[RMDB]
An RNA of 177 nucleotides, treated with DMS and 2A3 and read out base by base. High 2A3 reactivity points to a flexible backbone, as in loops and unpaired stretches. For DMS, 1,102 sequencing reads were counted. 2A3 adducts were read by reverse transcription with SuperScript II with manganese.

RNA sequence: GGGAACGACUCGAGUAGAGUCGAAAAGUUAAACCGUUCGCGGUUUAACAAAUUUAAAUGGGCAAGCGGCACCGUCCGCCAAAACAAACGGAAAAUUAAAAAAAACACCAUAGUUCGCUAUGGUGAAGACAAUCAGUAUGUUCGCAUACUGAUUGUCAAAAGAAACAACAACAACAAC
Reactivity to DMS in 0.01 (KOAc 150mM, MgCl2 10mM, bicine 150mM(pH8.5), 24C), signal-to-noise 1, nucleotides 027 to 126: g000u000u000a000a000a000c010c000g000u000u030c260g030c000g030g000u000u010u010a000a000c030a010a100a060u000u010u010a080a110a060u010g030g000g000c140a090a110g000c010g000g000c000a030c030c000g000u000c000c000g010c000c050a070a070a010a160c070a010a030a000c000g000g000a050a140a050a070u040u000a030a020a010a020a050a040a170a190c010a000c000c000a000u000a010g000u000u000c200g020c000u010a020u000g010g000u000g000a040a060
Reactivity to 2A3 in 0.01 (KOAc 150mM, MgCl2 10mM, bicine 150mM(pH8.5), 24C), signal-to-noise 3, nucleotides 027 to 126: g000u010u010a000a000a000c010c010g000u030u040c230g010c010g060g010u000u000u000a010a010c000a010a010a010u120u110u050a070a170a080u120g030g090g040c100a100a010g010c040g000g000c000a010c020c000g150u150c000c010g000c010c020a020a050a000a020c020a010a010a020c030g000g050a070a020a020a080u150u130a100a000a040a030a010a010a010a010c000a000c000c000a000u000a010g020u030u050c160g010c080u010a010u010g000g000u000g000a010a010